RNA sequence: GGGAACGACUCGAGUAGAGUCGAAAAAUUUGCUUUUGCAGCUUAUUGAGAUAGUUGUGCAUGUUUUUUAAUAAGUCUGUAAAAUGCUUUAAAUUCGAAAGCAUAAAAUCACAAGCUAUCGUUUGGCAUGAUUUAUUAAUUUCGAUUAAUAAAUCAUAAAAGAAACAACAACAACAAC
Reactivity to DMS in 0.01 (KOAc 150mM, MgCl2 10mM, bicine 150mM(pH8.5), 24C), signal-to-noise 4, nucleotides 027 to 126: a070u030u020u030g000c020u000u000u010u000g000c020a020g010c000u000u000a010u000u000g010a030g000a040u010a050g000u010u010g010u020g010c190a090u010g010u000u000u010u010u010u010a030a010u000a010a020g000u070c020u010g010u000a010a010a030a020u030g010c000u000u000u000a040a050a120u010u020c080g020a020a060a010g020c010a040u020a060a040a090a090u050c130a080c140a030a070g010c000u000a030u010c060g000u010u010u010g000g010c150
Reactivity to 2A3 in 0.01 (KOAc 150mM, MgCl2 10mM, bicine 150mM(pH8.5), 24C), signal-to-noise 7, nucleotides 027 to 126: a000u130u090u130g030c010u020u050u030u050g020c010a010g010c010u020u060a010u010u090g020a050g000a030u080a080g100u110u140g090u140g110c090a110u060g170u050u080u030u020u000u050a030a010u010a010a010g040u100c000u000g010u010a020a020a030a040u070g000c000u050u090u020a160a250a110u080u050c060g030a060a020a010g000c030a040u170a220a170a070a080u170c050a050c040a190a040g040c030u040a030u120c040g080u060u090u110g060g020c090
The record gives the reactivity of an RNA of 177 nucleotides to DMS and 2A3.
It was measured as part of the RMDB library OK1LIB.
Reactivities are given for positions 27 through 126.
The RNA was probed in 150 mM KOAc, 10 mM MgCl2 and 150 mM bicine (pH 8.5) at 24 C.